[RMDB]
RNA sequence: GGGAACGACUCGAGUAGAGUCGAAAACUUUGGUGAGGCCCUAUCUAGUAUAGCAAUCCACCAAGCAGGUGAUUUCACACAAUUCAGGUUUUCAUAGAAAAUGCGCCCUGACUUGACAGGUAUGGUCAUCAUAUAGGACUUUCGAGUCCUAUAUGAUAAAAGAAACAACAACAACAAC
Reactivity to 2A3 in 0.01 (KOAc 150mM, MgCl2 10mM, bicine 150mM(pH8.5), 24C), signal-to-noise 9, nucleotides 027 to 126: c020u060u030u090g040g010u070g030a090g020g020c020c010c000u010a020u000c040u040a060g100u130a060u030a060g030c040a040a040u040c050c010a010c010c000a030a040g120c060a050g020g070u050g040a090u030u130u130c060a050c000a010c020a060a060u060u040c010a020g010g050u020u060u090u100c070a090u130a090g160a080a110a040a030u090g040c020g020c020c000c010u010g030a050c010u050u040g030a030c030a040g000g070u090a060u090g040g010u030c010
Reactivity to DMS in 0.01 (KOAc 150mM, MgCl2 10mM, bicine 150mM(pH8.5), 24C), signal-to-noise 9, nucleotides 027 to 126: c020u010u020u010g000g010u000g000a070g000g000c280c300c020u000a010u000c030u040a100g030u030a040u000a040g010c070a070a230u020c040c020a030c010c010a020a030g000c130a090g000g020u000g010a110u010u010u020c040a100c080a110c080a040a160u020u000c050a030g000g000u010u030u010u000c040a050u010a120g020a070a060a080a050u010g010c150g000c260c000c000u000g000a040c070u000u000g000a080c100a070g000g000u000a030u010g010g010u000c090

Chemical mapping of a 177-nucleotide RNA with 2A3 and DMS. The reactions ran in a buffer of 150 mM KOAc, 10 mM MgCl2 and 150 mM bicine (pH 8.5), at 24 C. DMS adducts were read by reverse transcription with MarathonRT. 2A3 adducts were read by reverse transcription with SuperScript II with manganese. For 2A3, 16,688 sequencing reads were counted.